[RMDB]
Source: RMDB library RNAMAK, as collected in RNAgym.
Structure probing data (2A3 and DMS) for a 207-nucleotide construct.
The RNA was probed in 150 mM KOAc, 10 mM MgCl2 and 150 mM bicine (pH 8.5) at 24 C.
The 2A3 profile rests on 5,725 reads.
For DMS, 2,763 sequencing reads were counted.
RNA sequence: GGGAACGACUCGAGUAGAGUCGAAAACUUGGUGUUCGCACCAAGACCAUAGAUAUGGAUCCACCUUGGAUUUAUACAUACUCUGUAUGUCGGAAACGACAUACGUGAAUGUAUUGUCAGGGGAUCCUAAGUCGUCGCGUGUGGCUUCGGCCACAAACUGAAGAGACUUGUUCGCAAGUCUCUUCAGAAAAGAAACAACAACAACAAC
Reactivity to 2A3 in 0.01 (KOAc 150mM, MgCl2 10mM, bicine 150mM(pH8.5), 24C), signal-to-noise 5, nucleotides 027 to 156: c010u020u010g010g000u020g040u090u110c300g010c110a000c000c000a000a000g030a010c000c020a050u130a090g030a010u080a030u130g010g000a010u000c020c040a200c300c110u070u090g200g010a050u140u300u100a010u010a000c000a000u020a060c020u020c080u140g000u000a000u000g000u010c010g030g030a090a090a100c000g000a000c000a000u000a000c000g000u010g000a070a020u000g000u000a010u000u030g020u000c010a000g010g000g000g000a000u030c000c000u010a000a010g010u000c030g060u130c090g050c090g220u090g010u000g020g000c010u040u080c300g080g000c000c000a000c010a010a010a030
Reactivity to DMS in 0.01 (KOAc 150mM, MgCl2 10mM, bicine 150mM(pH8.5), 24C), signal-to-noise 1, nucleotides 027 to 156: c010u000u000g000g050u010g000u000u010c300g030c040a040c000c010a030a000g000a220c050c070a200u000a130g020a130u010a160u000g000g000a010u000c000c060a100c040c060u020u000g030g020a060u020u020u000a030u030a010c010a020u000a070c110u000c030u010g010u010a000u000g000u000c000g010g010a140a170a230c000g000a030c010a000u000a010c000g010u000g000a090a020u000g020u000a010u000u000g020u010c020a100g050g000g000g000a000u000c010c000u010a020a050g010u000c030g000u010c030g000c050g000u010g030u000g000g010c000u010u030c300g060g000c020c010a010c020a030a040a140